Conditions: 150 mM KOAc, 10 mM MgCl2 and 150 mM bicine (pH 8.5), 24 C. An RNA of 177 nucleotides, treated with 2A3 and DMS and read out base by base. The data come from the RNA Mapping Database (RMDB), library OK2TRN. High DMS reactivity at an A or C suggests that its Watson-Crick edge is free. Values cover nucleotides 27 to 126. For 2A3, 4,363 sequencing reads were counted. The DMS profile rests on 2,188 reads.
[RMDB]
RNA sequence: GGGAACGACUCGAGUAGAGUCGAAAAGCGGCGACCUCGUCGAGAUAGUCGCGAUUGCGCGAGUAGCUGCGCAGCCACGCGAACAGCACCGCCACGCACAGCAGCGCGAUCGCCGCGUAGCCGACGACUAGCUCGUAGUGUUCGCACUACGAGCUAGAAAAGAAACAACAACAACAAC
Reactivity to 2A3 in 0.01 (KOAc 150mM, MgCl2 10mM, bicine 150mM(pH8.5), 24C), signal-to-noise 3, nucleotides 027 to 126: g030c030g010g000c020g000a040c030c020u060c010g070u050c050g020a060g040a160u140a040g050u070c100g000c010g010a050u040u170g010c080g000c000g020a090g080u090a060g000c010u020g010c020g000c030a030g100c100c050a090c130g020c000g020a240a080c020a050g000c010a010c030c000g000c020c010a040c040g000c000a010c010a030g000c030a020g020c020g000c010g010a010u030c000g000c000c020g000c000g020u030a030g050c020c010g000a090c030g010a030
Reactivity to DMS in 0.01 (KOAc 150mM, MgCl2 10mM, bicine 150mM(pH8.5), 24C), signal-to-noise 3, nucleotides 027 to 126: g000c040g010g000c010g020a030c070c050u000c010g020u010c020g010a090g000a170u000a100g030u020c240g010c000g000a060u010u000g000c110g010c000g000a190g040u000a060g040c040u020g000c040g000c040a190g030c100c190a090c300g000c010g000a110a090c070a090g000c030a060c110c120g000c020c010a060c110g030c010a020c040a070g000c070a190g000c000g000c040g000a020u000c020g010c010c020g010c030g020u000a080g000c040c000g020a080c140g000a150